An RNA of 207 nucleotides, treated with 2A3 and DMS and read out base by base. The reactions ran in a buffer of 150 mM KOAc, 10 mM MgCl2 and 150 mM bicine (pH 8.5), at 24 C. High 2A3 reactivity points to a flexible backbone, as in loops and unpaired stretches. For 2A3 the reverse transcriptase was SuperScript II with manganese. The 2A3 profile rests on 682 reads. The data come from the RNA Mapping Database (RMDB), library RNAMAK.

RNA sequence: GGGAACGACUCGAGUAGAGUCGAAAAGCCUGAUUCGUCAGGCGUUACACCUUUGUGUUAGGGCCUGUGCAAGGCGGAGGUGGACCCAUUGGGUCCACUGACGCUGAUGACCACAGGCGAUUCUAACACUCUGGUAUUGAUCAUUGUUCGCAAUGAAAUAAUAGGCACGUUUCGACGUGCCUAUUAUAAAAGAAACAACAACAACAAC
Reactivity to 2A3 in 0.01 (KOAc 150mM, MgCl2 10mM, bicine 150mM(pH8.5), 24C), signal-to-noise 1, nucleotides 027 to 156: g020c000c000u000g010a050u000u080c140g060u000c080a000g000g010c000g010u070u130a060c020a040c060c000u000u000u040g020u000g000u000u000a020g000g060g070c000c000u050g000u000g010c080a180a220g010g010c050g000g000a020g010g040u020g000g000a000c050c000c080a140u100u300g000g010g020u030c000c010a000c010u000g010a000c000g000c010u030g040a140u060g050a070c040c040a000c000a020g000g000c000g020a040u100u010c010u000a000a000c000a010c000u000c020u020g000g040u030a100u060u110g150a090u080c040a050u000u120g040u090u090c190g010c170a110a080u120g000a170a060
Reactivity to DMS in 0.01 (KOAc 150mM, MgCl2 10mM, bicine 150mM(pH8.5), 24C), signal-to-noise 1, nucleotides 027 to 156: g000c010c000u020g030a020u010u000c230g060u000c010a050g040g010c010g000u000u070a100c120a080c000c010u000u000u000g010u020g050u000u030a000g010g000g000c010c010u000g020u010g000c040a150a280g000g020c000g020g000a300g060g000u010g010g030a020c050c000c000a300u010u010g080g040g050u000c000c000a000c000u000g000a300c000g000c000u000g000a060u000g000a300c300c010a100c010a010g000g000c070g010a060u000u020c010u000a000a030c020a000c020u000c000u010g040g020u000a070u000u030g000a200u000c140a030u000u000g010u000u000c050g090c000a030a060u000g040a130a130